[RMDB]
RNA sequence: GGGAACGACUCGAGUAGAGUCGAAAAGAAAACUGAUAUUCACGAUAAGCGCUAUCCUUCCGUUGUAUUCAAGCUUGGUUGUCGAGUACACGUGCUCGGAUAACGCUCAUCGAGUCUGAUCGGUUAAGUCAAAAGGAGAUUUCGAUCUCCUUUUGACAAAAGAAACAACAACAACAAC
Reactivity to DMS in 0.01 (KOAc 150mM, MgCl2 10mM, bicine 150mM(pH8.5), 24C), signal-to-noise 3, nucleotides 027 to 126: g000a070a070a030a020c020u000g010a000u000a010u000u000c010a060c010g020a000u000a020a020g010c000g010c030u000a020u000c000c000u010u000c020c030g000u040u020g020u000a000u000u000c020a100a130g000c050u000u030g030g020u020u010g010u010c180g000a020g010u010a010c010a020c000g000u020g020c190u010c140g000g010a010u000a010a040c000g000c000u000c040a010u000c000g000a020g010u000c010u010g010a020u000c000g000g010u000u000a060a110
Reactivity to 2A3 in 0.01 (KOAc 150mM, MgCl2 10mM, bicine 150mM(pH8.5), 24C), signal-to-noise 9, nucleotides 027 to 126: g090a010a120a000a000c010u000g010a010u000a010u020u000c010a010c020g000a000u010a010a010g000c000g000c020u000a000u000c010c000u020u000c010c000g100u120u130g000u030a010u010u020c060a090a070g050c100u140u180g150g100u300u080g150u200c050g000a000g000u010a000c000a010c020g060u110g020c060u020c040g000g000a000u000a010a000c000g000c010u000c000a000u000c000g000a000g000u000c010u060g140a010u000c000g020g010u050u050a050a020